[RMDB]
RNA sequence: GGGAACGACUCGAGUAGAGUCGAAAAGAUAUGGACGAUGAGCGAUAAGCUGGACUCGGAAACGAGUCCCAGCUUUUGACGCUCUAAGUCCUAAGUCGACGCGAUUGACGCUUCGGCGUCAAUCGAACAUAGCGUGCUUGUUCGCAAGCACGCUAUGAAAAGAAACAACAACAACAAC
Reactivity to DMS in 0.01 (KOAc 150mM, MgCl2 10mM, bicine 150mM(pH8.5), 24C), signal-to-noise 3, nucleotides 027 to 126: g000a020u000a230u020g000g010a010c000g010a270u010g010a000g020c000g040a160u010a010a010g020c000u000g000g000a040c000u010c010g000g000a060a050a080c010g010a010g020u010c130c080c060a010g010c000u000u000u010u010g010a200c050g010c000u000c000u010a080a240g000u010c000c000u000a000a090g000u000c010g000a210c210g020c020g010a000u010u000g000a010c010g000c000u000u010c200g040g000c000g020u000c000a010a010u000c010g000a030a110
Reactivity to 2A3 in 0.01 (KOAc 150mM, MgCl2 10mM, bicine 150mM(pH8.5), 24C), signal-to-noise 2, nucleotides 027 to 126: g010a000u030a020u080g000g000a000c020g030a080u290g010a030g000c030g070a120u050a300a000g000c010u000g000g010a000c000u000c010g000g000a050a010a000c010g000a000g010u010c000c010c050a000g010c000u010u020u060u130g070a010c000g000c000u000c000u010a010a000g000u000c000c000u000a020a010g010u000c020g030a060c110g000c020g120a000u000u020g010a020c000g000c000u050u080c300g110g000c010g000u000c000a010a000u010c000g010a050a000
About this RNA: Structure probing data (DMS and 2A3) for a 177-nucleotide construct. The 2A3 profile rests on 6,000 reads. The DMS profile rests on 3,400 reads. It was measured as part of the RMDB library TTRDEL. Values cover nucleotides 27 to 126. DMS adducts were read by reverse transcription with MarathonRT.